RNA sequence: GGGAACGACUCGAGUAGAGUCGAAAAUCGCUGACUUCACGGCCUUUAUCACAUAGCACCAAUGAGUUAACUUCUUCGCCAUCGUUAUCGAUAUACAAAUUGAGCGGCGAGAGGUCGUAGGCCCGCACGUCGGUGCUAAUUUCGAUUAGCACCGACGAAAAGAAACAACAACAACAAC
Reactivity to DMS in 0.01 (KOAc 150mM, MgCl2 10mM, bicine 150mM(pH8.5), 24C), signal-to-noise 1, nucleotides 027 to 126: u020c070g030c040u000g010a040c040u020u010c070a120c080g000g040c010c000u000u020u020a060u020c150a030c070a100u020a090g040c070a110c050c070a040a080u040g000a220g000u000u000a040a060c120u030u000c040u000u010c020g000c020c070a020u010c130g010u000u000a170u020c070g030a080u000a080u070a110c150a100a020a040u010u020g000a030g020c160g040g010c010g000a020g000a030g020g020u000c090g030u000a060g010g000c020c020c030g040c050a180
Reactivity to 2A3 in 0.01 (KOAc 150mM, MgCl2 10mM, bicine 150mM(pH8.5), 24C), signal-to-noise 2, nucleotides 027 to 126: u090c020g040c030u030g060a080c020u060u020c090a040c050g040g000c010c020u110u130u030a120u060c030a000c050a280u120a040g040c050a020c110c000a090a160u070g020a080g090u040u040a020a050c010u040u070c040u130u130c060g040c020c000a070u090c080g050u070u090a100u200c000g050a000u050a020u090a170c190a030a150a040u080u180g020a020g080c040g000g000c000g010a000g000a000g020g020u010c050g040u010a030g020g000c000c030c000g010c090a030